This 177-nucleotide RNA was probed chemically with DMS and 2A3. The RNA was probed in 150 mM KOAc, 10 mM MgCl2 and 150 mM bicine (pH 8.5) at 24 C. For 2A3 the reverse transcriptase was SuperScript II with manganese. 2A3 is a SHAPE reagent: it acylates the 2'-hydroxyl of flexible nucleotides of all four kinds. The DMS profile rests on 1,116 reads. For 2A3, 849 sequencing reads were counted.
RNA sequence: GGGAACGACUCGAGUAGAGUCGAAAAAUCAGUACACUGGCCAGUGGCUCUCAGCUGAUGAGUAUGAAAGGAUGGGAAUUCGCAUGAAUUGUAAUGGCAAGACAAGAAUUCCUUUCCAUGUCAAUGGCCUCGACAUCGUUUUCGAACGAUGUCGAGGAAAAGAAACAACAACAACAAC
Reactivity to DMS in 0.01 (KOAc 150mM, MgCl2 10mM, bicine 150mM(pH8.5), 24C), signal-to-noise 1, nucleotides 027 to 126: a000u000c030a020g070u000a020c100a120c180u000g010g000c030c080a070g030u000g030g090c020u000c000u000c020a040g020c000u000g000a010u000g000a070g000u030a040u040g000a070a120a130g000g000a020u000g010g010g000a090a050u000u000c040g000c120a150u000g000a070a010u020u000g000u000a160a110u030g010g120c000a000a040g000a300c080a010a070g000a000a000u000u000c000c040u000u000u000c070c000a180u020g000u060c000a000a010u010g000g000
Reactivity to 2A3 in 0.01 (KOAc 150mM, MgCl2 10mM, bicine 150mM(pH8.5), 24C), signal-to-noise 2, nucleotides 027 to 126: a000u040c020a020g010u010a080c060a020c060u000g050g000c000c010a090g030u050g020g090c020u010c000u000c060a040g000c040u040g000a050u070g030a000g030u090a090u210g100a000a070a040g000g020a000u010g000g000g030a050a040u000u010c020g000c090a060u080g050a250a030u040u040g060u230a150a150u080g300g000c000a000a000g050a080c030a020a010g050a000a000u000u000c000c000u030u020u020c000c020a000u070g020u000c080a020a130u030g020g000